[RMDB]
RNA sequence: GGGAACGACUCGAGUAGAGUCGAAAACUCUGACGCUUCGGCGUCAGAGAAACGUCUAAGCAGAUUGGCGAGGACGACGCUGCGGAGCGCGUUUGCCAACAAAAACGCAUAGAUUCGUCUAUGCGAAACGUCCUGGAAGGUUCGCCUUCCAGGACGUAAAAGAAACAACAACAACAAC
Reactivity to DMS in 0.01 (KOAc 150mM, MgCl2 10mM, bicine 150mM(pH8.5), 24C), signal-to-noise 1, nucleotides 027 to 126: c010u000c000u010g000a000c000g000c000u000u010c150g070g000c000g010u000c000a020g000a010g020a000a020a050c130g000u000c030u010a050a300g000c100a120g000a130u000u000g020g010c010g010a280g020g000a120c000g030a030c000g020c020u030g020c150g010g000a090g030c020g000c020g010u000u000u000g000c010c050a070a050c240a080a020a040a070a170c000g000c000a000u000a000g000a020u000u000c100g010u000c000u000a010u010g010c000g020a010a020
Reactivity to 2A3 in 0.01 (KOAc 150mM, MgCl2 10mM, bicine 150mM(pH8.5), 24C), signal-to-noise 2, nucleotides 027 to 126: c000u000c000u000g000a000c030g100c020u020u050c220g120g000c000g010u010c000a000g000a000g050a000a010a000c030g020u010c040u090a050a030g030c020a070g060a300u150u140g080g000c010g050a080g090g040a020c000g000a010c020g000c020u140g080c020g080g090a020g000c140g000c040g050u000u010u090g260c050c000a050a020c050a020a140a020a020a010c010g020c000a000u000a010g010a010u000u030c110g020u000c030u020a000u020g020c000g010a050a010